Chemical mapping of a 177-nucleotide RNA with DMS and 2A3.
2A3 adducts were read by reverse transcription with SuperScript II with manganese.
Conditions: 150 mM KOAc, 10 mM MgCl2 and 150 mM bicine (pH 8.5), 24 C.
Reactivities are given for positions 27 through 126.
The data come from the RNA Mapping Database (RMDB), libraries RFM100 and RFMREP.
[RMDB]
RNA sequence: GGGAACGACUCGAGUAGAGUCGAAAAUUUAGUUACUUAUUAUGAAAUGUAAAUUUGGUUCCUUUGGAAAACAACAAUAACGUGUAGUAUUGUUUUAUUCAAUCAUUCAGAAUUGGUAAAUGCAGAAAUAUUCAGGUAGGUUCGCCUACCUGAAUAUAAAAGAAACAACAACAACAAC
Reactivity to DMS in 0.01 (KOAc 150mM, MgCl2 10mM, bicine 150mM(pH8.5), 24C), signal-to-noise 3, nucleotides 027 to 126: u010u030u020a130g020u000u000a010c010u000u000a050u010u010a080u010g000a050a030a020u000g010u010a010a040a080u030u000u020g000g010u000u000c010c000u000u000u000g010g000a020a020a090a140c300a010a020c020a010a020u010a040a030c020g020u020g020u010a140g010u000a020u000u000g000u000u000u010u010a160u020u010c010a000a020u010c060a040u000u000c050a030g000a020a050u010u000g000g010u000a000a020a060u020g000c160a070g000a080a050
Reactivity to 2A3 in 0.01 (KOAc 150mM, MgCl2 10mM, bicine 150mM(pH8.5), 24C), signal-to-noise 2, nucleotides 027 to 126: u050u070u060a060g040u020u090a010c020u100u040a050u170u080a130u190g030a180a100a100u110g020u170a060a000a170u120u070u160g030g000u040u010c020c000u010u010u020g000g000a000a030a010a010c060a000a030c000a010a010u040a180a030c040g100u190g100u150a140g080u020a020u000u010g020u010u000u000u000a040u000u050c000a000a010u030c000a000u030u090c020a030g100a140a190u050u080g040g000u050a050a070a120u130g050c040a000g060a060a130